[RMDB]
RNA sequence: GGGAACGACUCGAGUAGAGUCGAAAAGAUAUGGAUUCUGCGUACGAGAGCUUGGAUUUAUAGGCGAAGUAUGUCGGAAACGACAUACUAAGCCUAUUGUCAGCUCUCGUGAUCAGAAUCCUAAGUCCAUUGGUCUUAUGUUCGCAUAAGACCAAUGAAAAGAAACAACAACAACAAC
Reactivity to DMS in 0.01 (KOAc 150mM, MgCl2 10mM, bicine 150mM(pH8.5), 24C), signal-to-noise 5, nucleotides 027 to 126: g010a090u000a300u000g010g020a020u000u000c000u000g000c240g010u010a010c000g010a010g000a010g000c010u010u010g030g010a020u010u010u000a000u000a000g010g010c000g010a300a050g000u000a010u000g010u000c000g000g000a150a100a260c000g020a020c000a010u000a000c000u000a010a300g020c000c000u000a000u000u000g010u010c010a050g000c010u000c000u000c000g000u000g000a040u010c010a000g010a020a010u000c010c000u000a020a100g000u010c050
Reactivity to 2A3 in 0.01 (KOAc 150mM, MgCl2 10mM, bicine 150mM(pH8.5), 24C), signal-to-noise 4, nucleotides 027 to 126: g060a050u140a070u250g000g010a000u020u000c010u020g010c040g080u080a010c010g010a000g000a000g030c070u300u300g220g020a080u170u300u140a030u040a010g020g020c010g000a040a010g010u000a000u000g020u010c000g020g010a050a110a050c020g000a000c000a000u010a000c000u000a000a000g020c000c010u010a000u010u000g000u000c010a000g000c100u000c000u000c000g000u000g000a010u000c000a000g010a000a000u000c000c000u000a080a030g080u070c010